[RMDB]
RNA sequence: GGGAACGACUCGAGUAGAGUCGAAAAAAAGCCAUUACUGGAGGUGGUGAUGUAAAAGUGGAUACCAAAAACAAGCAACCUCAAUGUAUUAGAGGAAAUGUAAUUGUGACAAGUAACACCAACAUUACCCUAAUUGAGUGUUCGCACUCAAUUAGGGAAAAGAAACAACAACAACAAC
Reactivity to DMS in 0.01 (KOAc 150mM, MgCl2 10mM, bicine 150mM(pH8.5), 24C), signal-to-noise 2, nucleotides 027 to 126: a050a050a090g000c030c000a050u010u000a110c110u030g000g010a110g030g020u010g000g010u000g000a050u000g010u010a040a070a070a080g000u010g020g000a090u000a090c020c030a030a080a100a100a020c060a040a060g000c060a030a040c000c000u000c000a110a070u030g000u000a130u000u000a140g000a000g000g000a020a040a070u000g000u000a130a090u020u000g000u000g000a100c280a120a070g000u000a060a040c060a050c000c080a030a010c070a060u010u020a130
Reactivity to 2A3 in 0.01 (KOAc 150mM, MgCl2 10mM, bicine 150mM(pH8.5), 24C), signal-to-noise 2, nucleotides 027 to 126: a000a000a000g040c010c000a030u060u130a080c070u100g100g070a060g000g000u040g010g000u050g010a070u080g030u140a000a030a020a050g020u020g010g020a020u040a070c000c040a040a110a000a030a000c020a000a010g070c010a110a160c010c000u000c000a010a050u130g010u090a200u140u140a100g000a000g000g040a050a130a100u040g010u050a050a130u060u020g000u030g030a020c030a030a030g030u030a060a000c020a000c060c030a060a070c040a040u010u090a090
The record gives the reactivity of an RNA of 177 nucleotides to DMS and 2A3. For 2A3 the reverse transcriptase was SuperScript II with manganese. Source: RMDB library OK2TST, as collected in RNAgym. For DMS, 1,166 sequencing reads were counted.